RNA sequence: GGGAACGACUCGAGUAGAGUCGAAAAAUCAAACUUCGGUUUGAUGGUGAAACCUUUGUGCGAUGGACAUGCGAUGCGGAGUACCCACCCAUUGGGUGGGUACGAAGUUUCGCAACAGCCAUCGCACUCUGGUGCGUGAUCUCUAUUCGUAGAGAAAAGAAGUAAGUUGGUUCGCCAACUUACUUCUAAAAGAAACAACAACAACAAC
Reactivity to 2A3 in 0.01 (KOAc 150mM, MgCl2 10mM, bicine 150mM(pH8.5), 24C), signal-to-noise 1, nucleotides 027 to 156: a010u010c020a020a000a020c020u090u100c230g120g030u000u010u000g000a000u010g030g040u190g130a150a090a000c000c000u000u000u030g010u000g010c010g000a000u010g000g040a070c040a100u020g020c000g030a000u030g000c000g040g020a000g060u010a010c000c010c000a000c000c040c120a300u250u300g000g000g000u000g000g000g000u000a000c000g000a000a000g000u000u000u000c000g010c000a000a000c020a000g040c010c000a000u010c000g000c000a000c000u000c000u010g020g000u010g070c140g100u140g040a110u050c010u000c000u010a070u070u060c190g080u210a020g070a020g030a100a150a030
Reactivity to DMS in 0.01 (KOAc 150mM, MgCl2 10mM, bicine 150mM(pH8.5), 24C), signal-to-noise 2, nucleotides 027 to 156: a010u000c010a000a000a050c000u010u010c300g100g010u000u000u000g010a030u000g030g050u020g020a200a090a080c020c000u000u000u000g030u000g010c000g030a050u010g000g010a090c060a300u000g020c000g030a000u000g020c000g010g030a300g010u000a000c000c030c000a040c000c010c000a300u000u010g040g130g060u000g000g000g020u000a000c010g000a170a300g000u000u000u000c000g030c020a010a030c070a120g000c010c000a010u000c010g040c000a010c010u000c070u020g020g010u000g020c040g030u000g010a180u000c010u000c000u000a090u000u000c120g010u000a030g000a060g000a070a080a160